[RMDB]
RNA sequence: GGGAACGACUCGAGUAGAGUCGAAAAGCAUUUGCUCGCCAGUUGCAACUGGUAUUGGGUUGAUUGCGCGAGCGAUUGUUGCGUGUCCAAUAACGUCGUCUGGGCUUGUUGGCUCUUCUACCCAAGCAAAUAUGCACCUGUUCGCAGGUGCAUAUUUAAAAGAAACAACAACAACAAC
Reactivity to DMS in 0.01 (KOAc 150mM, MgCl2 10mM, bicine 150mM(pH8.5), 24C), signal-to-noise 4, nucleotides 027 to 126: g000c030a030u000u000u000g000c000u000c000g020c000c000a050g010u000u000g020c040a020a030c020u000g030g030u010a090u010u020g020g010g020u000u030g010a050u000u000g020c210g020c000g010a020g010c010g010a010u000u000g020u000u000g020c170g020u000g010u010c000c000a020a040u010a040a040c200g020u000c040g010u010c150u010g010g010g000c020u010u000g000u000u000g000g010c030u000c030u000u000c120u000a160c010c000c030a110a120g030c190
Reactivity to 2A3 in 0.01 (KOAc 150mM, MgCl2 10mM, bicine 150mM(pH8.5), 24C), signal-to-noise 2, nucleotides 027 to 126: g000c010a040u030u090u050g000c020u020c000g000c000c020a040g030u070u250g200c010a020a040c030u070g070g110u300a200u120u300g210g000g000u000u010g030a030u020u000g000c050g020c000g060a000g000c000g000a000u000u030g010u060u090g010c080g000u050g030u000c000c000a010a000u050a050a010c110g000u030c020g070u000c130u300g040g070g000c020u020u070g050u000u050g020g000c010u030c070u110u020c030u070a090c020c000c000a020a000g100c050

Chemical mapping of a 177-nucleotide RNA with DMS and 2A3. The DMS profile rests on 6,722 reads. The reactions ran in a buffer of 150 mM KOAc, 10 mM MgCl2 and 150 mM bicine (pH 8.5), at 24 C. For 2A3, 1,580 sequencing reads were counted. The data come from the RNA Mapping Database (RMDB), library OK2TST. For DMS the reverse transcriptase was MarathonRT. High 2A3 reactivity points to a flexible backbone, as in loops and unpaired stretches. Reactivities are rounded to 0.1 and cut off at 0 and 3.